Structure probing data (2A3 and DMS) for a 177-nucleotide construct. It was measured as part of the RMDB library OK2TRN. The reactions ran in a buffer of 150 mM KOAc, 10 mM MgCl2 and 150 mM bicine (pH 8.5), at 24 C. The DMS profile rests on 816 reads. DMS adducts were read by reverse transcription with MarathonRT.
RNA sequence: GGGAACGACUCGAGUAGAGUCGAAAAGAAAAGUUUUGCUAAGUCUAAUUAAGUCUGGAACAAUUAGUAAAAUUAUACUUAUAACCAUCAUCGCUACUAACAUUUCAAUAAGCGAAAAAGCUUUGACGUAUGAGGUAAAGUUCGCUUUACCUCAUACAAAAGAAACAACAACAACAAC
Reactivity to 2A3 in 0.01 (KOAc 150mM, MgCl2 10mM, bicine 150mM(pH8.5), 24C), signal-to-noise 2, nucleotides 027 to 126: g000a010a300a000a010g000u010u000u010u060g020c010u020a000a020g010u020c010u040a030a040u280u030a290a010g140u110c130u080g020g000a020a170c020a100a300u020u010a020g000u020a010a010a010a010u100u020a060u140a120c000u030u070a030u090a300a050c010c010a040u060c010a030u050c030g030c010u040a050c020u000a220a040c030a100u060u200u130c040a060a180u100a210a000g000c000g120a120a180a000a000a010g060c050u080u140u030g050a060c170
Reactivity to DMS in 0.01 (KOAc 150mM, MgCl2 10mM, bicine 150mM(pH8.5), 24C), signal-to-noise 1, nucleotides 027 to 126: g000a110a140a200a150g010u000u000u000u000g000c000u000a010a070g020u000c090u000a130a090u000u000a070a180g000u000c190u000g010g040a090a050c090a090a110u000u010a020g000u000a000a030a000a010u000u000a120u010a110c000u010u000a140u010a130a210c010c010a130u010c090a120u000c010g000c030u000a080c170u000a070a070c190a110u010u010u010c090a090a090u030a010a080g000c020g030a020a080a100a070a080g000c070u000u000u010g000a190c280